[RMDB]
RNA sequence: GGGAACGACUCGAGUAGAGUCGAAAAAGAGAUCGAGAACCAGACGUUCCGGAUCUUCCAGGCUUUCCUUCACACGCACGAGGAAGGUCACGGCUUCCUUGCCGUCCACGAUGCGGUGAUCGUAGGAGCAUAGCAUCCACUUCGGUGGAUGCUAUGCAAAAGAAACAACAACAACAAC
Reactivity to 2A3 in 0.01 (KOAc 150mM, MgCl2 10mM, bicine 150mM(pH8.5), 24C), signal-to-noise 1, nucleotides 027 to 126: a000g070a000g030a010u040c040g020a010g010a300a050c040c080a100g170a280c070g000u020u000c020c000g080g000a070u020c000u060u110c050c030a000g000g020c020u040u080u020c000c000u000u130c030a050c010a020c000g050c060a030c140g000a030g000g040a000a080g050g020u040c080a010c080g000g000c000u140u120c030c000u000u120g040c010c010g020u020c020c000a030c020g080a100u040g020c030g040g030u040g020a010u080c070g040u050a060g010g090a080
Reactivity to DMS in 0.01 (KOAc 150mM, MgCl2 10mM, bicine 150mM(pH8.5), 24C), signal-to-noise 2, nucleotides 027 to 126: a050g000a010g000a020u000c030g010a140g040a000a000c010c170a150g010a240c240g010u000u000c010c030g020g020a060u000c000u000u030c040c070a090g020g000c040u010u000u000c000c010u010u000c060a040c090a160c080g010c020a140c190g000a000g020g010a060a030g000g000u000c050a030c080g010g020c220u000u010c100c040u000u000g010c050c080g010u000c000c050a100c030g010a040u000g000c010g000g010u010g010a020u000c080g000u000a110g000g000a170
The record gives the reactivity of an RNA of 177 nucleotides to 2A3 and DMS. For DMS the reverse transcriptase was MarathonRT. Conditions: 150 mM KOAc, 10 mM MgCl2 and 150 mM bicine (pH 8.5), 24 C. Source: RMDB library OK2TST, as collected in RNAgym. Reactivities are rounded to 0.1 and cut off at 0 and 3.